The record gives the reactivity of an RNA of 177 nucleotides to 2A3 and DMS. Reactivities are rounded to 0.1 and cut off at 0 and 3. Conditions: 150 mM KOAc, 10 mM MgCl2 and 150 mM bicine (pH 8.5), 24 C. For 2A3 the reverse transcriptase was SuperScript II with manganese.
RNA sequence: GGGAACGACUCGAGUAGAGUCGAAAAAGCGUCGACGAACCUUCCAACCUUCCAAAGCAGCAAAAGCUGAACCUUCCAACCUUCCAAUCUACUCGAGAGGAGGAGGAGGACGAGGAGGAGGAAUUAAUAUACUUGGCCAUUUCGAUGGCCAAGUAUAAAAAGAAACAACAACAACAAC
Reactivity to 2A3 in 0.01 (KOAc 150mM, MgCl2 10mM, bicine 150mM(pH8.5), 24C), signal-to-noise 1, nucleotides 027 to 126: a000g020c030g110u010c020g040a060c030g040a090a160c010c000u020u060c010c030a300a190c060c020u090u000c020c010a030a060a200g010c000a020g000c080a220a200a230a000g020c020u010g060a120a160c010c030u030u090c010c040a240a240c060c000u110u110c000c000a070a020u050c000u070a210c040u040c050g020a020g000a050g070g000a030g000g050a000g010g010a000g000g040a040c130g030a120g050g000a000g010g010a020g020g000a010a000u150u100a160a080
Reactivity to DMS in 0.01 (KOAc 150mM, MgCl2 10mM, bicine 150mM(pH8.5), 24C), signal-to-noise 1, nucleotides 027 to 126: a110g010c070g010u000c030g020a100c060g020a030a110c100c040u000u000c020c010a040a060c020c020u000u000c000c020a110a140a130g010c000a020g020c060a040a080a070a120g000c000u000g000a170a120c050c040u000u000c010c030a060a090c030c010u000u010c000c040a050a220u000c010u030a040c010u010c050g000a040g000a300g000g000a000g000g020a290g000g000a060g000g000a130c170g000a090g000g000a020g010g030a220g000g010a080a050u000u000a030a080